[RMDB]
The data come from the RNA Mapping Database (RMDB), library OK2TST. The record gives the reactivity of an RNA of 177 nucleotides to 2A3 and DMS. The 2A3 profile rests on 758 reads. 2A3 adducts were read by reverse transcription with SuperScript II with manganese. For DMS the reverse transcriptase was MarathonRT. Reactivities are given for positions 27 through 126.
RNA sequence: GGGAACGACUCGAGUAGAGUCGAAAAAGGAUCUUGUGAUUGCUUCAAUAGUGCAUCUUGUCCUAACAAUUCUGCACGUUUGUUAACGCCUUGAACGGUAAAUUUUGCAAUGGACCAAGGUGUUGCACCUAGCCCGUGUAUUCGUACACGGGCUAGGAAAAGAAACAACAACAACAAC
Reactivity to 2A3 in 0.01 (KOAc 150mM, MgCl2 10mM, bicine 150mM(pH8.5), 24C), signal-to-noise 1, nucleotides 027 to 126: a000g060g000a080u100c050u080u210g010u090g080a140u040u110g040c000u070u030c010a000a300u090a190g000u070g000c010a010u000c010u010u000g040u000c000c010u000a050a050c010a000a030u180u100c070u150g040c060a000c160g050u080u080u000g050u090u120a060a000c070g090c000c000u020u030g020a100a020c010g000g050u150a110a100a250u210u230u060u090g040c070a100a050u130g050g040a020c020c060a020a030g010g000u030g060u010u060g000c000a050
Reactivity to DMS in 0.01 (KOAc 150mM, MgCl2 10mM, bicine 150mM(pH8.5), 24C), signal-to-noise 1, nucleotides 027 to 126: a050g000g010a050u010c080u000u000g040u000g020a090u000u000g000c030u000u010c080a130a070u020a100g040u000g000c000a030u000c080u000u000g000u010c050c050u010a140a090c100a000a020u000u010c190u000g000c070a020c040g000u010u010u000g010u010u010a020a030c050g060c060c040u000u000g040a100a120c140g010g020u010a040a070a090u000u000u020u000g020c110a070a020u000g010g010a090c100c030a030a010g020g000u010g000u000u000g000c070a130